Structure probing data (2A3 and DMS) for a 177-nucleotide construct. High DMS reactivity at an A or C suggests that its Watson-Crick edge is free. 2A3 adducts were read by reverse transcription with SuperScript II with manganese. Source: RMDB library RFMREP, as collected in RNAgym.
[RMDB]
RNA sequence: GGGAACGACUCGAGUAGAGUCGAAAAUUCGAUCCAAUCCAGGAGAGGAAGUGGUAGGAUGCAGCUGCCGGUUCAUGGAUACCUCUGCAGUGCAUGUCGUAGGCUUGCACUUGCAUGGGUUUGCAUGGUAGUAUUUUGAGUUCGCUCAAAAUACUACAAAAGAAACAACAACAACAAC
Reactivity to 2A3 in 0.01 (KOAc 150mM, MgCl2 10mM, bicine 150mM(pH8.5), 24C), signal-to-noise 2, nucleotides 027 to 126: u040u040c040g030a020u000c000c010a020a020u050c050c020a060g030g050a070g040a020g070g040a090a050g110u070g080g040u050a040g030g060a040u100g030c020a040g010c030u050g010c010c000g040g030u070u080c020a010u010g080g050a020u040a030c000c000u010c010u010g010c010a000g000u010g000c000a010u020g040u080c100g140u140a060g070g000c010u000u010g000c000a010c000u080u150g000c000a000u020g010g000g000u010u010u030g040c010a000u040g100
Reactivity to DMS in 0.01 (KOAc 150mM, MgCl2 10mM, bicine 150mM(pH8.5), 24C), signal-to-noise 4, nucleotides 027 to 126: u000u000c080g010a140u010c010c010a090a100u010c080c060a110g000g010a110g010a150g010g000a050a070g010u010g000g020u010a080g000g010a050u010g020c060a050g020c030u000g000c020c040g010g010u010u000c020a010u000g000g000a040u000a020c000c000u000c240u000g010c000a020g010u000g000c000a010u000g010u000c020g010u000a120g020g000c010u000u000g000c010a010c010u000u000g020c000a020u000g010g000g000u000u000u000g000c030a020u000g000